RNA sequence: GGGAACGACUCGAGUAGAGUCGAAAACCUCACUACAUUUUAAUGUUCCUAAAGAAUUUGUGACAGGUACAGUAAAACGUAUUGCAAGGUUUAUCAGUUCCUAUAAACAGGUAAAUAACAAUAUAUGAAAAGCAAAGACUGUUCGCAGUCUUUGCAACUGUAAACACGUGUUCGCACGUGUUUACAGAAAAGAAACAACAACAACAAC
Reactivity to 2A3 in 0.01 (KOAc 150mM, MgCl2 10mM, bicine 150mM(pH8.5), 24C), signal-to-noise 4, nucleotides 027 to 156: c000c000u040c010a020c000u010a000c000a030u000u000u000u060a050a040u010g010u030u030c030c000u080a110a140a070g150a210a230u220u290u300g100u060g090a080c080a090g000g000u000a000c000a020g020u040a000a000a000a000c000g000u000a010u010u030g030c050a070a050g030g010u010u030u050a150u110c040a040g020u010u020c010c000u010a050u150a100a090a010c060a020g070g050u090a060a110a040u150a110a080c030a080a060u130a030u070a050u270g090a070a090a000a010g000c000a010a000a010g010a000c000u010g030u000u020c100g010c050a000g000u000c000u000u000u000g000c000a000a000
Reactivity to DMS in 0.01 (KOAc 150mM, MgCl2 10mM, bicine 150mM(pH8.5), 24C), signal-to-noise 1, nucleotides 027 to 156: c040c000u010c040a060c070u010a030c000a010u000u020u000u000a010a060u000g030u000u000c000c000u000a110a150a140g020a050a160u000u010u000g000u000g050a130c110a060g000g010u000a020c010a030g030u000a000a020a030a070c030g000u000a010u000u000g080c010a110a040g010g040u000u010u010a000u000c170a100g020u000u020c040c030u020a110u010a070a070a170c050a130g030g000u000a020a120a080u010a150a170c020a070a100u000a100u040a090u010g010a100a130a160a180g020c000a000a010a040g010a000c020u000g030u000u010c240g070c020a000g000u010c000u000u000u030g000c000a010a020
The record gives the reactivity of an RNA of 207 nucleotides to 2A3 and DMS. The reactions ran in a buffer of 150 mM KOAc, 10 mM MgCl2 and 150 mM bicine (pH 8.5), at 24 C. Source: RMDB library M2RFOK, as collected in RNAgym. For 2A3, 2,093 sequencing reads were counted. The DMS profile rests on 1,608 reads.